[RMDB]
RNA sequence: GGGAACGACUCGAGUAGAGUCGAAAAGGCGACACCUGCCCAGUGCUGGCACGUGAAGCUGGAGUUCAGUUCAGUGAAGCGCCAGUAAACGGCGGGGGUAACUAUAACCCUCUUAAGGUAGCGAAAUCCGAGUCUAGAGUUUCGACUCUAGACUCGGAAAAGAAACAACAACAACAAC
Reactivity to 2A3 in 0.01 (KOAc 150mM, MgCl2 10mM, bicine 150mM(pH8.5), 24C), signal-to-noise 1, nucleotides 027 to 126: g110g000c000g010a040c000a000c070c000u050g000c020c100c040a100g000u000g010c010u000g010g000c030a030c140g090u060g160a120a000g000c000u000g010g000a000g010u210u210c110a070g000u000u000c000a000g000u020g080a170a000g000c000g000c000c020a010g000u000a000a140a090c030g000g000c000g030g030g000g000g000u000a010a010c110u160a030u030a240a030c010c030c000u090c000u060u150a020a210g050g000u000a000g100c010g050a020a000a170u030